An RNA of 177 nucleotides, treated with DMS and 2A3 and read out base by base. It was measured as part of the RMDB library TTRDEL. For DMS the reverse transcriptase was MarathonRT. For 2A3 the reverse transcriptase was SuperScript II with manganese. The RNA was probed in 150 mM KOAc, 10 mM MgCl2 and 150 mM bicine (pH 8.5) at 24 C. In probing experiments dimethyl sulfate is read out at A N1 and C N3, which are open when not base-paired. 2A3 is a SHAPE reagent: it acylates the 2'-hydroxyl of flexible nucleotides of all four kinds.
[RMDB]
RNA sequence: GGGAACGACUCGAGUAGAGUCGAAAAGAUAUGGAUCCCGGAGGGAGUCGAUCGGAAACGAUACGACGAGGAUCUCCUGGGAUCCUAAGUCAAAACAACUUACUGAGGUUCGCCUCAGUAAGUUGAAUCAGGAAUACCUGUUCGCAGGUAUUCCUGAAAAAGAAACAACAACAACAAC
Reactivity to DMS in 0.01 (KOAc 150mM, MgCl2 10mM, bicine 150mM(pH8.5), 24C), signal-to-noise 2, nucleotides 027 to 126: g020a060u000a300u010g010g000a010u000c000c010c000g010g010a020g020g010g010a040g030u000c000g020a060u000c010g000g000a070a080a230c010g010a020u000a130c000g010a000c000g000a090g000g020a060u010c000u000c000c020u020g040g000g010a000u010c000c000u000a000a050g010u000c020a080a110a110a240c010a020a000c000u010u000a000c000u000g010a000g000g010u000u020c300g010c000c000u000c000a000g000u000a000a000g010u000u000g010a020a080
Reactivity to 2A3 in 0.01 (KOAc 150mM, MgCl2 10mM, bicine 150mM(pH8.5), 24C), signal-to-noise 2, nucleotides 027 to 126: g040a010u080a050u160g000g000a000u010c000c000c010g040g000a010g030g010g020a020g000u000c010g000a010u000c020g020g070a080a050a040c010g010a000u300a300c010g010a010c000g010a010g000g040a010u000c000u030c020c050u230g010g020g000a000u010c000c000u000a010a000g010u000c020a020a050a080a140c000a000a030c000u000u010a000c000u000g010a000g000g080u080u110c200g090c030c000u000c000a010g000u010a000a000g000u000u000g000a010a030